Structure probing data (DMS and 2A3) for a 177-nucleotide construct. For DMS the reverse transcriptase was MarathonRT. The reactions ran in a buffer of 150 mM KOAc, 10 mM MgCl2 and 150 mM bicine (pH 8.5), at 24 C.
RNA sequence: GGGAACGACUCGAGUAGAGUCGAAAACAGUUGUCGUCGUGAGCGCGCGGCAUCUGCGCCCUAUGUCCGGGUCGCAGCGACGUAGUUCAUUGUGCCGGGACGGCCGCUGCAGCGCUGAGGUCGGCCAAGAUAGCACGAGGUUCGCCUCGUGCUAUCUAAAAGAAACAACAACAACAAC
Reactivity to DMS in 0.01 (KOAc 150mM, MgCl2 10mM, bicine 150mM(pH8.5), 24C), signal-to-noise 2, nucleotides 027 to 126: c100a120g000u000u050g010u000c020g010u000c030g020u010g020a040g010c040g020c040g010c030g010g000c020a070u000c070u020g030c130g000c040c010c300u020a110u010g010u000c050c050g020g000g030u030c040g020c000a050g000c090g010a030c030g000u010a070g020u000u000c030a090u020u010g010u010g030c010c000g000g010g010a030c030g030g010c030c040g010c060u000g020c040a150g020c080g030c040u030g030a110g030g020u000c010g030g010c040c180a100
Reactivity to 2A3 in 0.01 (KOAc 150mM, MgCl2 10mM, bicine 150mM(pH8.5), 24C), signal-to-noise 2, nucleotides 027 to 126: c040a070g030u060u000g020u080c020g020u000c030g030u060g110a040g050c040g020c010g000c030g000g000c030a080u040c090u100g090c130g050c040c030c010u130a190u300g060u000c050c050g210g000g040u300c080g000c000a000g060c000g000a010c060g220u200a080g000u130u060c040a000u020u040g010u030g000c000c030g010g060g030a020c000g010g020c010c050g010c030u060g000c020a180g000c010g000c040u030g050a080g090g000u030c010g020g000c000c010a020